[RMDB]
RNA sequence: GGGAACGACUCGAGUAGAGUCGAAAAGAUAUGGACACGUUGCUUUUGACGCCUGAGGCAUCGGAAACGAUGUGUAGGGCGAUAAGCACCGUGUCCUAAGUCGACGAGGCAUCUUCGGAUGCCUCAACCAGCGAACUCAGUUCGCUGAGUUCGCUGGAAAAGAAACAACAACAACAAC
Reactivity to 2A3 in 0.01 (KOAc 150mM, MgCl2 10mM, bicine 150mM(pH8.5), 24C), signal-to-noise 2, nucleotides 027 to 126: g010a020u050a020u140g000g010a010c000a010c000g020u010u000g000c020u010u140u090u300g280a220c100g010c010c010u070g010a120g240g000c010a000u010c010g010g000a020a050a040c010g000a000u010g280u060g030u110a030g000g000g000c010g010a000u010a000a000g000c000a000c020c010g000u000g000u010c010c020u010a000a010g020u010c000g030a100c120g010a020g010g000c000a010u000c000u030u090c300g100g000a000u000g000c010c000u010c000a010a000
Reactivity to DMS in 0.01 (KOAc 150mM, MgCl2 10mM, bicine 150mM(pH8.5), 24C), signal-to-noise 2, nucleotides 027 to 126: g000a030u000a300u000g000g000a050c000a000c000g020u030u000g000c000u000u010u010u030g010a160c060g020c000c000u000g010a220g000g000c000a000u000c000g000g000a120a110a090c000g000a000u000g010u030g010u000a300g010g000g000c000g020a050u000a050a000g000c000a010c080c010g010u000g000u000c010c000u000a000a070g000u000c000g000a100c240g010a000g000g010c000a010u000c000u000u000c260g000g000a030u000g000c010c000u000c010a020a030